Chemical mapping of a 177-nucleotide RNA with 2A3 and DMS. The RNA was probed in 150 mM KOAc, 10 mM MgCl2 and 150 mM bicine (pH 8.5) at 24 C. For 2A3 the reverse transcriptase was SuperScript II with manganese. The 2A3 profile rests on 2,450 reads.

RNA sequence: GGGAACGACUCGAGUAGAGUCGAAAAAGCGGCAUAUCGAAGGUGAUGCCAAGAUGCGGGUUCUCUUUGACGGUGGCGAAUUUGAUGCGCGGAACACGCGGGUAGUAGUGAUUCUUGCGCACGCAGACCAGUGAUUACUCUUCGGAGUAAUCACUGGAAAAGAAACAACAACAACAAC
Reactivity to 2A3 in 0.01 (KOAc 150mM, MgCl2 10mM, bicine 150mM(pH8.5), 24C), signal-to-noise 4, nucleotides 027 to 126: a000g100c080g010g010c020a030u070a030u110c040g030a050a010g190g010u150g040a020u060g030c010c000a010a020g070a030u140g000c050g000g010g000u030u040c060u010c000u020u060u060g040a050c050g060g010u040g010g030c040g010a060a080u070u030u200g070a100u070g020c020g000c000g000g000a000a000c000a010c050g040c010g070g070g030u180a120g020u000a010g000u040g110a300u010u010c000u050u300g000c000g010c000a000c020g010c020a010g020a090
Reactivity to DMS in 0.01 (KOAc 150mM, MgCl2 10mM, bicine 150mM(pH8.5), 24C), signal-to-noise 2, nucleotides 027 to 126: a100g030c060g000g000c030a010u010a100u000c050g000a110a110g040g010u010g000a110u040g030c060c010a060a030g000a110u030g010c030g030g010g000u000u010c050u000c030u010u040u000g000a050c020g000g000u000g000g000c010g010a050a060u010u050u040g000a140u000g010c000g000c000g000g020a000a030c000a010c040g020c040g000g020g020u070a120g010u010a110g040u000g000a160u020u000c000u010u050g030c000g000c020a020c060g010c120a060g010a160